RNA sequence: GGGAACGACUCGAGUAGAGUCGAAAAGUGUGAAGUGAGUGAGCCGCUUACGAGCACGAAUUACACGGCUCUAUUGACAUUACUGGGCGCCAGGAGCCCUACCUGGACAAGUCUCGAAGAUCGGGCCGCGAUUGAGAGACGACUAUUACCGGCCACAACUGGUAUAAUCAUUCGUGAUUAUACCAGUAAAAGAAACAACAACAACAAC
Reactivity to 2A3 in 0.01 (KOAc 150mM, MgCl2 10mM, bicine 150mM(pH8.5), 24C), signal-to-noise 5, nucleotides 027 to 156: g030u030g000u020g070a070a040g010u000g010a010g010u050g020a030g040c030c030g000c060u010u030a020c020g020a000g010c020a010c070g020a010a050u150u090a080c110a020c080g010g000c000u000c000u050a100u020u130g050a060c060a120u030u140a120c110u120g040g030g010c050g000c010c010a010g030g000a040g030c000c000c010u030a040c000c000u020g040g010a060c030a080a060g010u000c000u000c010g030a070a020g000a020u010c020g000g110g070c090c020g100c040g040a020u060u090g010a020g000a000g000a040c000g000a000c000u010a020u060u080a080c020c040g030g000c020c000a060c020a000
Reactivity to DMS in 0.01 (KOAc 150mM, MgCl2 10mM, bicine 150mM(pH8.5), 24C), signal-to-noise 4, nucleotides 027 to 156: g040u000g030u000g000a130a210g000u010g020a090g020u000g010a120g040c080c050g020c020u000u000a090c050g000a300g020c000a110c060g010a110a090u010u010a100c090a150c000g010g000c000u000c030u000a110u000u000g000a110c080a070u010u000a100c050u000g010g010g020c040g000c010c020a080g010g000a090g000c050c020c030u000a020c020c020u000g000g000a140c070a080a220g010u000c010u000c020g010a160a140g000a080u000c010g010g020g040c070c070g030c010g020a080u010u000g000a300g000a080g030a050c020g000a090c090u000a120u000u010a040c040c020g030g000c030c020a040c070a130

Record summary
The record gives the reactivity of an RNA of 207 nucleotides to 2A3 and DMS. It was measured as part of the RMDB library OK3TST. The 2A3 profile rests on 4,892 reads. For DMS, 7,304 sequencing reads were counted. The RNA was probed in 150 mM KOAc, 10 mM MgCl2 and 150 mM bicine (pH 8.5) at 24 C.